[RMDB]
RNA sequence: GGGAACGACUCGAGUAGAGUCGAAAAAGUCAGAGGCCGCUACCAUGCAAACUAGGGCUGGCUACUCUUGCACAGAAUCACAUCUCGAUAAUUGUCAGUGCAAGAAGGACAAUUAUACCAUUUAAUGAAAACGUUUACCUGUUCGCAGGUAAACGAAUCGGCAAACUAAGUUCGCUUAGUUUGCCGAAAAAGAAACAACAACAACAAC
Reactivity to 2A3 in 0.01 (KOAc 150mM, MgCl2 10mM, bicine 150mM(pH8.5), 24C), signal-to-noise 1, nucleotides 027 to 156: a000g010u000c080a000g060a220g080g080c000c000g000c120u060a130c040c030a080u150g030c050a050a070a300c100u230a140g010g050g000c020u030g010g000c000u040a030c040u000c000u000u030g000c000a020c000a000g160a130a040u050c010a000c000a220u050c080u080c100g030a020u000a010a000u050u030g050u000c000a000g000u000g000c000a000a000g010a000a020g000g000a000c000a000a000u120u000a020u050a200c000c120a090u180u210u160a160a200u110g030a000a000a000a000c050g000u000u000u000a000c000c000u000g040u030u060c080g020c060a000g020g000u000a000a000a000c000g000a000a000